[RMDB]
RNA sequence: GGGAACGACUCGAGUAGAGUCGAAAACAUGUGUAGGAACGAGCUAUGAUGCAAGCAAUGUUUUUCUUUAGUGCUGGAGCAGUUUUUGGUUAUUGCUAUCGUCAUUACGAUGCUAAAGUUAAAAAAGUUACCUUAUGUAAUUCGUUACAUAAGGUAAAAAAGAAACAACAACAACAAC
Reactivity to DMS in 0.01 (KOAc 150mM, MgCl2 10mM, bicine 150mM(pH8.5), 24C), signal-to-noise 9, nucleotides 027 to 126: c070a070u020g010u010g010u000a030g000g010a070a060c080g010a110g010c040u000a060u010g010a070u010g010c070a090a060g010c060a080a060u010g010u000u000u000u000u000c020u000u000u000a050g020u010g010c040u010g000g010a050g010c040a050g010u000u000u010u010u010g010g010u010u010a050u010u000g010c020u010a030u000c010g020u000c190a080u010u020a050c040g010a030u000g000c030u010a030a050a060g010u010u020a000a040a050a060a070a090g010
Reactivity to 2A3 in 0.01 (KOAc 150mM, MgCl2 10mM, bicine 150mM(pH8.5), 24C), signal-to-noise 9, nucleotides 027 to 126: c040a050u080g040u020g040u100a030g050g050a090a060c050g020a040g030c010u040a050u230g070a050u140g070c050a040a060g020c010a050a080u070g030u020u030u010u030u040c030u010u050u060a050g010u030g050c050u040g040g050a020g010c010a040g020u010u010u040u130u130g120g010u090u080a060u080u070g000c010u040a020u070c010g030u000c010a030u050u190a030c030g010a010u020g000c010u040a070a040a040g030u100u140a060a080a040a020a000a010g030